[RMDB]
RNA sequence: GGGAACGACUCGAGUAGAGUCGAAAAGAUCCGAGGGGACUGUCCCUCUCGAGAAUCGGCAAAUGGGGCCCCUCGCUCGUAUCUCCGAGAGGAGACGAGAAGGAGGUGGAUCUCCCUUUGCCAUCCGUGCCUACGUACUUCGGUACGUAGAAAAGAAACAACAACAACAAC
Reactivity to 2A3 in 0.01 (KOAc 150mM, MgCl2 10mM, bicine 150mM(pH8.5), 24C), signal-to-noise 9, nucleotides 027 to 129: g030a020u010c010c010g000a000g020g020g010g010a040c120u190g200u260c020c020c000u010c000u000c000g280a300g030a070a110u080c060g000g000c000a010a020a070u210g000g000g010g010c010c000c000c000u000c010g020c000u000c000g060u110a180u040c010u000c000c000g040a050g010a040g070g000a000g000a000c010g010a000g010a030a090g240g010a000g000g060u300g060g020a120u060c080u080c010c000c000u000u000u000g000c000c000a010u010c010c010g060u110g030c000
Reactivity to DMS in 0.01 (KOAc 150mM, MgCl2 10mM, bicine 150mM(pH8.5), 24C), signal-to-noise 9, nucleotides 027 to 129: g010a000u030c010c020g010a020g030g010g030g000a140c170u040g030u070c120c000c010u020c020u000c020g030a100g020a080a040u030c050g000g000c010a000a020a030u050g000g010g010g010c000c000c010c010u010c020g010c000u000c000g020u020a110u030c000u030c000c000g030a230g000a230g000g000a010g000a000c020g000a000g000a040a080g040g000a000g000g030u110g010g000a140u040c050u040c000c000c050u000u000u000g010c020c010a000u020c010c020g010u040g000c160